[RMDB]
RNA sequence: GGGAACGACUCGAGUAGAGUCGAAAACUGGGCGAUCCGUUCCUCGCCGAACCACCCGUAGAGCUGACCGGUGAUCCACCUGUCCUCGUUCUCGGGGAGAUCCGUGUCGAGCAGGUAGAGAGGGGCGUCUUGGUACGGCAUUCGUGCCGUACCAAGAAAAAGAAACAACAACAACAAC
Reactivity to DMS in 0.01 (KOAc 150mM, MgCl2 10mM, bicine 150mM(pH8.5), 24C), signal-to-noise 1, nucleotides 027 to 126: c140u000g000g000g020c040g010a020u040c060c020g030u000u000c000c060u000c030g000c050c020g000a080a160c120c050a120c050c000c040g000u020a060g000a110g010c020u010g000a030c040c090g000g010u000g050a230u000c100c030a040c010c020u000g000u010c150c120u000c150g000u010u000c030u000c000g010g040g010g050a070g000a110u000c000c010g000u000g020u000c030g020a030g030c050a070g030g010u000a060g000a070g000a080g000g020g010g030c060g010
The data come from the RNA Mapping Database (RMDB), library OK2TST. Chemical mapping of a 177-nucleotide RNA with DMS. The RNA was probed in 150 mM KOAc, 10 mM MgCl2 and 150 mM bicine (pH 8.5) at 24 C. For DMS the reverse transcriptase was MarathonRT.